Notes:
Structure probing data (2A3 and DMS) for a 177-nucleotide construct. Reactivities are given for positions 27 through 126. For 2A3 the reverse transcriptase was SuperScript II with manganese. DMS adducts were read by reverse transcription with MarathonRT. For DMS, 1,130 sequencing reads were counted. Reactivities are rounded to 0.1 and cut off at 0 and 3. The RNA was probed in 150 mM KOAc, 10 mM MgCl2 and 150 mM bicine (pH 8.5) at 24 C. Source: RMDB library M2PK90, as collected in RNAgym.
RNA sequence: GGGAACGACUCGAGUAGAGUCGAAAAGCAAACAACGUACAUUCUAUAAUACCUGAAGUACGAAAAGGUAAAUAUAUAAUGCAUCAGCUAAAAGGUCUGCUAGAUGCAUAUAUAAAAAGACCAAAAACAUUAUAUCGCUGUUCGCAGCGAUAUAAUGAAAAGAAACAACAACAACAAC
Reactivity to 2A3 in 0.01 (KOAc 150mM, MgCl2 10mM, bicine 150mM(pH8.5), 24C), signal-to-noise 2, nucleotides 027 to 126: g060c030a080a010a080c030a080a000c030g000u000a030c020a260u040u000c020u080a180u040a300a250u100a250c010c070u040g000a050a000g010u010a010c030g040a150a050a000a030g010g000u020a030a080a000u030a000u000a000u010a010a290u030g000c000a010u010c000a000g000c020u060a090a140a170a070g140g140u050c100u110g000c010u020a070g000a000u010g000c000a000u000a000u000a000u010a000a060a010a000a000g030a000c000c000a050a140a000a000a000
Reactivity to DMS in 0.01 (KOAc 150mM, MgCl2 10mM, bicine 150mM(pH8.5), 24C), signal-to-noise 2, nucleotides 027 to 126: g000c130a080a120a110c180a110a170c070g030u030a030c000a150u030u000c010u020a020u020a150a100u010a170c160c100u000g000a070a050g000u000a000c020g000a090a030a160a080g000g030u000a020a060a200u010a020u000a000u000a060a090u010g010c000a000u000c000a000g000c000u000a020a080a110a090g030g000u010c210u000g000c000u000a120g000a000u000g000c000a000u010a010u010a010u010a000a030a070a070a090g000a030c010c010a050a050a060a040a120